[RMDB]
RNA sequence: GGGAACGACUCGAGUAGAGUCGAAAAGGGUGGGUAAAACAACCACCAUCGGUAAGUUGGCACGCCAAUUCCAAGCUGAAGGGAAAUCCGUCAUGCUGGCUGCGGGUGAUACUUUCCGUGCAGCGGCCGGUCAACACCCUUUCGAGGGUGUUGACCGAAAAGAAACAACAACAACAAC
Reactivity to DMS in 0.01 (KOAc 150mM, MgCl2 10mM, bicine 150mM(pH8.5), 24C), signal-to-noise 1, nucleotides 027 to 126: g050g000g020u010g010g020g000u000a140a060a150a170c150a040a060c010c000a080c020c010a100u020c000g000g000u010a030a100g000u000u000g000g020c010a000c020g000c070c060a080a230u000u010c020c030a040a100g000c050u000g000a040a090g000g020g000a070a110a170u000c050c080g020u000c080a000u000g030c000u000g000g020c090u030g060c300g000g000g000u020g000a120u020a130c180u000u010u000c000c010g000u050g000c100a100g000c080g000g000c060